Conditions: 150 mM KOAc, 10 mM MgCl2 and 150 mM bicine (pH 8.5), 24 C. The record gives the reactivity of an RNA of 177 nucleotides to 2A3 and DMS. For DMS, 2,435 sequencing reads were counted. Values are in units of 0.01, from 0 to 300, in steps of 10.
RNA sequence: GGGAACGACUCGAGUAGAGUCGAAAAUGGAAGCGGAACGGGAAACCGCAACGUGAGGUCCAGCGAAUCCAGGCGCACGUCCGUCGCUUGGCCCUCGAACACGGGCGGGACGAGGCUGAUGGGGUCCGUCACGUUGAGAUUUCGAUCUCAACGUGACAAAAGAAACAACAACAACAAC
Reactivity to 2A3 in 0.01 (KOAc 150mM, MgCl2 10mM, bicine 150mM(pH8.5), 24C), signal-to-noise 2, nucleotides 027 to 126: u090g010g020a070a040g010c030g000g020a050a050c000g060g010g060a020a050a070c020c010g000c060a010a120c040g070u030g050a050g000g050u000c000c000a010g000c010g050a030a030u090c090c050a080g010g000c040g000c050a070c130g060u050c030c000g030u020c000g030c010u020u090g010g020c010c020c010u010c020g020a080a010c070a010c010g060g030g020c070g010g000g040a010c050g040a050g070g000c060u050g030a130u100g010g030g000g020u040c020c060
Reactivity to DMS in 0.01 (KOAc 150mM, MgCl2 10mM, bicine 150mM(pH8.5), 24C), signal-to-noise 3, nucleotides 027 to 126: u010g030g020a060a140g030c040g000g010a160a070c090g000g000g000a120a130a130c020c000g000c020a040a110c040g000u000g010a040g020g030u000c010c020a050g000c050g000a070a070u000c190c140a090g000g000c030g010c180a130c170g010u000c040c030g020u000c010g000c010u010u020g030g000c080c000c030u000c020g010a050a080c200a080c040g000g000g010c020g000g000g000a100c090g000a070g000g020c060u000g000a140u010g000g000g000g000u020c130c070